[RMDB]
RNA sequence: GGGAACGACUCGAGUAGAGUCGAAAAUGUGAGGCGCGUGCAGGGUGAGUGUGAGUGGACGCGUGAGUGUGUGAGUGUGCGCGCUUGGAGCGUGUUAGGCGAGUGCGUGCGCCCACCCCUGCGCCCCCGACAGCAGGUAGUUCGCUACCUGCUGUCGAAAAGAAACAACAACAACAAC
Reactivity to DMS in 0.01 (KOAc 150mM, MgCl2 10mM, bicine 150mM(pH8.5), 24C), signal-to-noise 2, nucleotides 027 to 126: u040g010u020g010a100g030g010c080g030c050g000u000g000c080a070g010g030g020u010g010a090g030u000g000u040g000a110g040u030g010g010a060c040g000c000g000u000g000a100g000u000g020u000g030u010g010a090g000u010g020u020g000c010g000c000g000c000u030u030g000g020a140g030c020g040u010g000u000u020a080g000g020c040g010a120g000u000g000c020g010u010g000c000g010c010c000c000a020c010c030c010c020u020g010c000g000c030c000c010c040
Reactivity to 2A3 in 0.01 (KOAc 150mM, MgCl2 10mM, bicine 150mM(pH8.5), 24C), signal-to-noise 5, nucleotides 027 to 126: u190g060u020g040a080g050g030c050g000c050g070u040g000c020a010g010g040g040u150g040a130g040u070g010u040g010a050g030u070g020g060a030c010g000c010g020u080g040a070g020u170g010u050g010u020g020a090g030u100g020u060g010c000g000c010g000c020u020u060g080g050a100g030c060g010u080g110u190u130a110g010g090c020g000a010g010u050g000c000g000u020g030c000g000c000c000c000a010c000c010c000c000u020g000c000g000c010c000c000c000